[RMDB]
RNA sequence: GGGAACGACUCGAGUAGAGUCGAAAAGACGCCUGUGUGGCGAAGCGAGCAUGAGAUGGAGCCGCAAGAGAAGAUGAGAUAGAAGCGGCGCGAUAGAUUGCUCGCGAAAAGAUCCAUCUCACAGAGAGCUGAUUAGGAUAUUCGUAUCCUAAUCAGCAAAAGAAACAACAACAACAAC
Reactivity to 2A3 in 0.01 (KOAc 150mM, MgCl2 10mM, bicine 150mM(pH8.5), 24C), signal-to-noise 7, nucleotides 027 to 126: g100a020c030g030c010c010u160g070u120g090u220g140g000c020g040a040a010g050c020g010a010g000c060a040u050g020a030g000a030u030g030g030a030g000c000c000g000c050a090a030g110a020g060a190a080g080a110u260g080a040g050a170u140a110g120a180a010g020c000g000g010c010g000c010g030a010u050a080g100a070u000u180g020c000u010c000g010c000g000a000a020a000a000g040a030u000c010c010a020u000c010u010c010a070c040a040g110a010g020a020
Reactivity to DMS in 0.01 (KOAc 150mM, MgCl2 10mM, bicine 150mM(pH8.5), 24C), signal-to-noise 5, nucleotides 027 to 126: g000a130c050g020c040c010u010g020u010g030u030g020g010c040g000a080a150g000c020g000a010g000c010a030u000g010a300g000a030u010g000g010a300g010c010c000g020c000a100a130g000a150g030a110a120g000a170u030g010a120g020a170u020a120g000a190a150g000c010g000g000c020g020c140g000a040u020a050g000a110u010u000g000c040u000c000g000c000g000a010a050a070a050g010a100u020c060c010a110u010c000u000c020a080c160a120g010a110g000a120